[RMDB]
RNA sequence: GGGAACGACUCGAGUAGAGUCGAAAAUUCACGCCCCCACAGUUGGGGAUGCACUCUGAUUAGCUAAUUCAUAGAAUGGCUGGUCACUUCAAGGGUGUAUCGGAUUCUGUGGUGAGCCGCCCACGAAAGAGAAUCAUUAGUUCGCUAAUGAUUCUCUAAAAGAAACAACAACAACAAC
Reactivity to 2A3 in 0.01 (KOAc 150mM, MgCl2 10mM, bicine 150mM(pH8.5), 24C), signal-to-noise 9, nucleotides 027 to 126: u110u070c050a020c090g000c000c000c000c000c000a000c000a000g020u020u020g050g000g020g000a000u000g000c000a000c000u000c040u100g000a010u010u010a000g000c010u080a300a100u070u030c040a130u120a220g030a040a010u010g000g000c000u000g000g010u020c010a030c080u240u240c130a110a080g010g000g000u000g000u000a000u000c000g010g010a030u020u000c000u000g000u000g000g000u010g000a010g000c010c050g030c010c020c000a060c040g110a140a160
Reactivity to DMS in 0.01 (KOAc 150mM, MgCl2 10mM, bicine 150mM(pH8.5), 24C), signal-to-noise 7, nucleotides 027 to 126: u020u010c120a150c230g000c020c010c220c000c000a020c010a010g010u010u010g000g010g010g000a000u000g010c000a010c000u000c000u000g000a020u000u000a010g010c010u000a030a040u010u000c030a180u030a180g010a010a020u000g000g000c000u000g000g000u000c000a120c250u020u030c300a150a040g000g000g020u000g030u000a000u010c000g000g000a300u010u000c000u010g010u000g000g000u010g000a070g000c030c110g020c000c000c000a120c140g010a060a080
An RNA of 177 nucleotides, treated with 2A3 and DMS and read out base by base. The data come from the RNA Mapping Database (RMDB), libraries RFM100 and RFMREP. The RNA was probed in 150 mM KOAc, 10 mM MgCl2 and 150 mM bicine (pH 8.5) at 24 C. For 2A3 the reverse transcriptase was SuperScript II with manganese. For DMS the reverse transcriptase was MarathonRT.